[RMDB]
RNA sequence: GGGAACGACUCGAGUAGAGUCGAAAAUCGCUCCAGGUUUCCCCGGGGAUCCCUGAAGCUCUCCUCCGAGCCGCCUUCUUUUUUCUUUUCUGCUCAGGAGGUCAGGUGUGAACCACAGGAACCACGAGUUUAGUUCCGAGGAACCAACUGCGGUUCCCAAUGUAUGAUGCUUCGGCAUCAUACAUUGAAAAGAAACAACAACAACAAC
Reactivity to 2A3 in 0.01 (KOAc 150mM, MgCl2 10mM, bicine 150mM(pH8.5), 24C), signal-to-noise 1, nucleotides 027 to 156: u130c020g000c020u000c050c030a060g030g000u020u030u000c080c000c000c080g010g020g000g020a000u010c000c000c010u010g000a060a060g050c030u020c060u030c060c000u010c030c020g000a000g000c000c010g160c120c020u300u130c040u230u210u230u100u240u170c040u250u300u180u100c040u070g010c020u000c000a140g000g000a000g000g040u000c000a000g000g040u250g030u020g280a000a000c020c010a020c040a080g000g000a000a000c000c000a010c010g020a050g010u060u050u160a010g000u020u070c000c000g010a000g000g000a000a000c000c020a040a220c130u220g160c190g040g000u000u000c010c000

Description:
Structure probing data (2A3) for a 207-nucleotide construct. High 2A3 reactivity points to a flexible backbone, as in loops and unpaired stretches. Conditions: 150 mM KOAc, 10 mM MgCl2 and 150 mM bicine (pH 8.5), 24 C.